[RMDB]
RNA sequence: GGGAACGACUCGAGUAGAGUCGAAAACAAUAGUGUCUUUAACAUUUUGCAGGCGACAACUGCUAAUGUCAGUGCACUUAUGGGUGCUAAUGGCAACAAGAUUGUUGACAAAGAAGUUAAAGACAUGGAGCGACCCGGUUCGCCGGGUCGAAAAGAAACAACAACAACAAC
Reactivity to 2A3 in 0.01 (KOAc 150mM, MgCl2 10mM, bicine 150mM(pH8.5), 24C), signal-to-noise 4, nucleotides 027 to 129: c030a010a050u130a120g040u000g000u000c010u000u000u000a020a030c040a300u070u030u030u120g150c130a050g000g130c010g020a000c000a010a000c030u070g040c050u100a100a080u020g000u000c000a010g050u000g030c000a000c000u080u090a200u230g210g010g000u000g000c000u070a270a110u030g010g000c000a020a040c040a020a100g000a030u020u020g010u010u000g030a020c000a000a080a010g070a100a000g000u000u010a000a000a000g000a000c000a000u040g010g000a030g030
Reactivity to DMS in 0.01 (KOAc 150mM, MgCl2 10mM, bicine 150mM(pH8.5), 24C), signal-to-noise 4, nucleotides 027 to 129: c060a130a120u060a050g030u020g030u000c020u020u010u030a030a020c020a060u030u000u070u030g050c000a080g030g030c070g040a010c000a000a030c000u020g020c140u030a080a170u050g000u030c010a030g000u020g030c020a010c030u010u090a000u120g000g000g000u020g020c000u030a090a080u010g000g030c010a020a060c120a020a050g050a160u010u000g020u000u000g010a040c050a050a090a050g000a020a060g000u020u000a000a030a030g030a050c010a030u000g010g060a060g050